[RMDB]
RNA sequence: GGGAACGACUCGAGUAGAGUCGAAAACAGAGUUUGCCUUGCAAGCUUUUGGAAUUGAAAGCACAAUUCUGAGUGAUCUUUCAACAAUUAUAGGUUACAACCUUACCGAUUGGUUGGAAGAGGCUGACAAUCUGGUGGCUAGAUUCGCUCAACGAGGCAGGAAGCCUCUAUUCGUAGAGGCUUCCUGAAAAGAAACAACAACAACAAC
Reactivity to DMS in 0.01 (KOAc 150mM, MgCl2 10mM, bicine 150mM(pH8.5), 24C), signal-to-noise 1, nucleotides 027 to 156: c090a140g020a120g000u010u030u010g000c000c130u000u000g000c050a100a200g010c040u000u000u000u000g030g010a130a060u030u010g000a150a170a180g020c100a070c010a040a150u010u010c060u010g000a130g050u000g000a110u050c030u000u000u000c000a040a040c000a050a020u000u000a160u010a060g030g000u000u000a100c170a030a150c080c010u000u010a140c050c050g020a080u000u020g040g040u010u000g030g030a030a060g030a050g000g000c030u000g000a110c010a060a060u010c020u010g020g060u000g000g010c030u000a060g000a180u000u010c040g030c040u010c050a100a080c080g040a080g000g020
Reactivity to 2A3 in 0.01 (KOAc 150mM, MgCl2 10mM, bicine 150mM(pH8.5), 24C), signal-to-noise 4, nucleotides 027 to 156: c020a010g030a000g040u030u040u070g010c010c060u090u230g100c070a130a100g020c010u180u240u260u300g050g040a020a010u060u080g050a160a070a040g070c060a020c020a090a040u090u010c010u030g030a040g020u040g020a100u020c020u010u000u000c010a030a010c000a010a010u090u080a100u100a160g010g050u090u130a050c060a120a070c020c010u080u080a010c020c050g050a020u000u040g190g020u030u000g000g000a010a000g010a010g000g030c020u010g030a040c020a020a140u030c010u040g050g010u040g030g080c050u020a030g010a140u050u080c040g000c030u020c030a050a060c080g010a040g000g050